[RMDB]
RNA sequence: GGGAACGACUCGAGUAGAGUCGAAAAAUGCAGGAAAUGCGGGUAGCCGCUGCCGCAAUCGUCUCGGCGAUUGGCGGUAGAGGAAAGUCCAGGCUCGCCCAAGCUGAGAUGCUUGGAGUGUUCGUACCUGAUAAUUAUCGUUCGCGAUAAUUAUCAGAAAAGAAACAACAACAACAAC
Reactivity to DMS in 0.01 (KOAc 150mM, MgCl2 10mM, bicine 150mM(pH8.5), 24C), signal-to-noise 6, nucleotides 027 to 126: a080u010g020c080a080g010g010a060a070a080u000g010c020g020g010g010u000a110g010c000c000g010c000u000g000c000c000g010c000a020a010u000c000g010u000c030u010c300g020g000c000g000a010u000u000g020g030c000g010g010u000a000g000a040g010g000a080a080a120g010u000c040c020a140g000g010c020u000c040g020c060c000c000a010a010g000c000u000g000a190g000a070u000g010c000u000u000g000g010a250g000u000g000u000u000c060g010u010a240c170
Reactivity to 2A3 in 0.01 (KOAc 150mM, MgCl2 10mM, bicine 150mM(pH8.5), 24C), signal-to-noise 3, nucleotides 027 to 126: a000u100g000c040a030g070g060a080a100a030u100g000c000g020g020g040u050a020g060c000c010g020c010u010g000c010c000g020c010a000a010u010c010g030u000c020u010c060g160g000c020g000a000u010u030g250g030c010g000g010u010a000g000a010g000g030a120a100a010g070u010c040c010a030g070g000c000u000c000g040c000c000c000a000a000g000c010u040g010a010g000a050u070g000c000u000u030g000g010a080g060u130g050u060u070c040g020u040a090c010
The record gives the reactivity of an RNA of 177 nucleotides to DMS and 2A3. Source: RMDB library RFMREP, as collected in RNAgym. Values are in units of 0.01, from 0 to 300, in steps of 10.